This 177-nucleotide RNA was probed chemically with DMS and 2A3. For 2A3, 14,571 sequencing reads were counted. Source: RMDB library RFMREP, as collected in RNAgym. The RNA was probed in 150 mM KOAc, 10 mM MgCl2 and 150 mM bicine (pH 8.5) at 24 C. 2A3 adducts were read by reverse transcription with SuperScript II with manganese.
[RMDB]
RNA sequence: GGGAACGACUCGAGUAGAGUCGAAAAACACGGCUGGACAGCGGGCAACGGAAUCCCAAAAGCAGCUGUUGUCUCCAGAGCAUUCCAGCUGCGCUUGGAUUUCGUUCCCUGCUCUCCUGCCUUAGCACUACCGUUAAAAGUUCGCUUUUAACGGUAGAAAAGAAACAACAACAACAAC
Reactivity to DMS in 0.01 (KOAc 150mM, MgCl2 10mM, bicine 150mM(pH8.5), 24C), signal-to-noise 6, nucleotides 027 to 126: a120c060a120c210g010g000c000u010g010g010a040c110a030g020c030g010g010g010c280a010a020c010g010g000a020a010u000c080c010c060a020a040a160a250g000c010a000g010c010u000g010u000u000g000u000c030u000c140c190a150g000a100g010c060a050u000u000c200c010a010g010c010u010g010c010g000c150u000u000g000g000a050u000u000u000c000g010u000u000c300c000c000u000g010c010u000c220u000c020c000u010g000c020c010u000u000a050g010c230a200
Reactivity to 2A3 in 0.01 (KOAc 150mM, MgCl2 10mM, bicine 150mM(pH8.5), 24C), signal-to-noise 3, nucleotides 027 to 126: a000c040a020c040g010g000c010u020g010g010a000c000a000g000c000g010g010g000c010a010a000c000g010g020a010a010u060c060c020c000a020a040a010a030g000c000a000g000c010u010g010u030u050g010u010c040u050c080c090a100g030a030g210c030a040u130u120c070c010a020g010c000u000g010c010g010c050u030u040g000g000a000u020u010u010c000g000u000u000c010c000c000u020g000c000u000c000u000c000c000u000g000c000c010u000u030a020g000c010a020